The record gives the reactivity of an RNA of 207 nucleotides to DMS and 2A3.
DMS adducts were read by reverse transcription with MarathonRT.
It was measured as part of the RMDB library OK3TST.
RNA sequence: GGGAACGACUCGAGUAGAGUCGAAAAGAUCUGGAAAUUGAGGCCCUAGAGGGACGUGACUUCUGUUAGGUUAUACAGUGAUUUGGUUUGUCUGUGUCCCCACCCAAAUCUCAUCUUGAAUUGUAGCUCCCAUAAUUCCCAUGUGUCUUGGGAGGGAGUGCAGGAGUAAUUUCGAUUACUCCUGCACAAAAGAAACAACAACAACAAC
Reactivity to DMS in 0.01 (KOAc 150mM, MgCl2 10mM, bicine 150mM(pH8.5), 24C), signal-to-noise 2, nucleotides 027 to 156: g000a070u000c040u000g020g010a060a040a130u020u010g010a110g020g020c030c000c060u000a150g010a160g030g060g000a030c010g000u000g020a040c020u000u000c070u000g010u000u000a110g030g010u000u010a110u000a090c060a090g010u010g020a060u000u000u000g000g010u000u010u010g020u010c030u000g040u000g000u010c000c000c010c030a160c150c000c010a030a030a060u000c030u000c050a190u010c030u000u010g010a130a080u010u000g020u010a080g010c000u000c020c000c000a110u000a040a230u000u000c030c010c050a080u010g040u010g030u010c070u000u000g000g020g000a030g000g000g010a060
Reactivity to 2A3 in 0.01 (KOAc 150mM, MgCl2 10mM, bicine 150mM(pH8.5), 24C), signal-to-noise 3, nucleotides 027 to 156: g000a020u030c030u110g030g070a100a060a040u060u040g060a080g060g040c000c020c040u100a050g070a160g030g020g000a000c030g050u080g010a020c020u080u060c050u060g090u100u140a080g040g060u110u050a100u060a130c030a040g010u030g130a090u130u110u180g060g030u080u080u130g060u040c040u050g180u040g030u060c000c020c000c000a040c000c000c000a040a010a060u020c030u020c060a100u010c050u090u070g060a090a050u080u090g070u170a020g050c010u030c000c010c000a010u120a070a090u100u030c030c000c010a030u080g090u030g020u090c100u070u020g000g010g010a020g010g010g000a070